Chemical mapping of a 177-nucleotide RNA with 2A3 and DMS. The RNA was probed in 150 mM KOAc, 10 mM MgCl2 and 150 mM bicine (pH 8.5) at 24 C. Values cover nucleotides 27 to 126. In probing experiments dimethyl sulfate is read out at A N1 and C N3, which are open when not base-paired. DMS adducts were read by reverse transcription with MarathonRT.
[RMDB]
RNA sequence: GGGAACGACUCGAGUAGAGUCGAAAACACCUUUAGCCUGGGCAACUCCCGUACCACUACGCUUCUCAGAGUAAAAUGUGAGGGCAGGAAGGCCUCUGGACAGGCGAGGCAGGGCAGGAGGUUGGCCGUCAUAACAAGUAUUCGUACUUGUUAUGACAAAAGAAACAACAACAACAAC
Reactivity to 2A3 in 0.01 (KOAc 150mM, MgCl2 10mM, bicine 150mM(pH8.5), 24C), signal-to-noise 9, nucleotides 027 to 126: c050a040c010c000u030u080u130a050g040c020c030u050g030g040g010c020a040a050c020u010c000c000c010g010u080a230c010c020a040c040u150a060c070g020c020u280u070c030u050c040a080g020a020g160u130a040a090a060a090u180g060u030g060a050g010g020g000c020a010g060g050a060a030g090g010c000c010u010c030u050g050g070a080c040a080g030g080c040g010a030g030g000c080a080g020g000g000c030a020g010g030a020g050g030u030u040g060g030c020c020
Reactivity to DMS in 0.01 (KOAc 150mM, MgCl2 10mM, bicine 150mM(pH8.5), 24C), signal-to-noise 9, nucleotides 027 to 126: c130a160c040c030u000u000u010a150g020c040c030u000g010g000g010c070a090a100c070u000c010c010c020g020u000a080c060c020a210c060u010a110c130g000c020u000u010c020u000c040a050g000a090g000u000a060a070a100a110u010g010u000g000a060g000g000g010c020a080g010g010a120a090g010g000c050c010u000c020u000g020g010a090c140a050g010g010c100g010a140g010g020c040a130g000g000g010c040a110g010g000a030g000g000u000u000g010g000c060c050